[RMDB]
RNA sequence: GGGAACGACUCGAGUAGAGUCGAAAAGAUAUGGACACGUCGACGAAGUUAGGGUUUGGUGUAUCGGAAACGAUACACUGAUCCUAACAGAGACGGUCCUAAGUCAAAACGACGGUUCGCCGUCGAACAAGUACAGCACGUUCGCGUGCUGUACUUGAAAAGAAACAACAACAACAAC
Reactivity to DMS in 0.01 (KOAc 150mM, MgCl2 10mM, bicine 150mM(pH8.5), 24C), signal-to-noise 3, nucleotides 027 to 126: g020a030u000a300u000g000g000a010c000a140c020g040u000c000g020a180c240g000a170a050g000u000u000a000g010g010g000u010u000u020g020g000u000g010u000a000u000c000g010g000a090a070a210c000g010a050u010a000c000a000c000u000g000a000u000c000c000u000a010a010c000a040g000a140g000a010c020g000g000u000c010c000u000a020a070g010u030c040a050a080a100a150c020g010a010c010g010g000u000u020c200g010c010c010g000u000c000g020a050a110
Reactivity to 2A3 in 0.01 (KOAc 150mM, MgCl2 10mM, bicine 150mM(pH8.5), 24C), signal-to-noise 4, nucleotides 027 to 126: g040a010u060a040u160g020g020a130c280a070c300g000u010c020g080a300c050g050a240a070g000u000u010a030g050g060g000u020u090u300g030g000u030g020u000a010u010c000g010g040a040a050a070c000g000a020u000a010c000a000c000u000g000a000u000c000c000u010a020a000c010a000g000a000g000a000c010g000g000u000c000c000u010a110a000g050u020c030a030a010a100a110c010g020a000c000g010g060u060u070c290g020c060c010g000u020c010g020a010a020